RNA sequence: GGGAACGACUCGAGUAGAGUCGAAAACUCGGUGAUGCGGUGGAAAAUGAGAACAUAACUCUGAGUCACGUGGCCGUGGUGAAAGCCUUAGUCAUGGGCGACGAGAUGGUGCCGUACACCAAACACCGCUGCUUCAGCCACCACAAGCAGAAGAUUGAAUUCGAGAGUAGUUCGCUACUCUCGAAUUAAAAGAAACAACAACAACAAC
Reactivity to DMS in 0.01 (KOAc 150mM, MgCl2 10mM, bicine 150mM(pH8.5), 24C), signal-to-noise 2, nucleotides 027 to 156: c020u010c000g030g080u000g010a090u000g020c140g020g000u000g040g010a060a080a080a090u000g000a170g020a100a180c050a050u000a160a130c040u000c000u010g020a300g000u000c010a060c010g020u020g000g030c000c040g000u000g010g000u000g010a120a130a150g000c000c020u000u000a040g030u000c030a050u000g040g020g020c010g000a240c240g000a080g020a120u000g040g020u000g020c020c130g000u000a230c020a040c000c010a040a040a210c030a060c000c000g000c010u010g000c040u010u000c010a080g000c080c020a060c040c030a070c190a060a040g000c020a080g010a180a050g000a300u000u020g030
Reactivity to 2A3 in 0.01 (KOAc 150mM, MgCl2 10mM, bicine 150mM(pH8.5), 24C), signal-to-noise 3, nucleotides 027 to 156: c040u040c030g000g000u040g000a250u050g000c020g010g020u040g050g120a050a040a030a100u230g030a140g020a170a010c020a080u180a140a060c010u000c010u030g020a010g000u020c010a040c300g000u010g020g020c030c030g060u040g000g000u040g070a200a030a030g000c000c000u060u080a020g020u010c020a060u070g000g000g010c020g010a010c030g010a000g000a030u020g050g040u100g000c030c020g000u020a020c010a010c010c000a000a020a010c030a010c000c010g010c010u010g020c000u060u030c030a050g070c040c010a090c040c010a060c030a050a000g000c030a030g030a060a020g040a060u090u250g050

The record gives the reactivity of an RNA of 207 nucleotides to DMS and 2A3. It was measured as part of the RMDB library OK3TST. For DMS the reverse transcriptase was MarathonRT. Values cover nucleotides 27 to 156. The 2A3 profile rests on 2,355 reads.